[RMDB]
RNA sequence: GGGAACGACUCGAGUAGAGUCGAAAAGAGGCCAAGAGGAGGGCAGGAGCCGGGAAGGAGGACAGCUGCAGCCAUGACAGGGUGGGGGUUUGAUGUCCGCCUCUGUGAAAACCUCCACCACAGCUGGGCACCCACUAUAUUUCGAUAUAGUGGGUGCAAAAGAAACAACAACAACAAC
Reactivity to DMS in 0.01 (KOAc 150mM, MgCl2 10mM, bicine 150mM(pH8.5), 24C), signal-to-noise 1, nucleotides 027 to 126: g010a080g000g000c070c130a110a110g000a110g030g020a090g010g000g040c080a060g000g010a050g000c080c050g000g020g010a050a060g000g000a030g000g020a060c110a030g000c030u000g030c050a030g010c050c060a080u000g010a090c160a110g010g020g010u000g000g000g000g000g000u000u000u000g010a180u000g010u000c040c070g000c050c010u010c060u000g030u000g000a120a010a040a020c020c000u000c000c000a000c010c020a050c060a040g000c030u000g000g000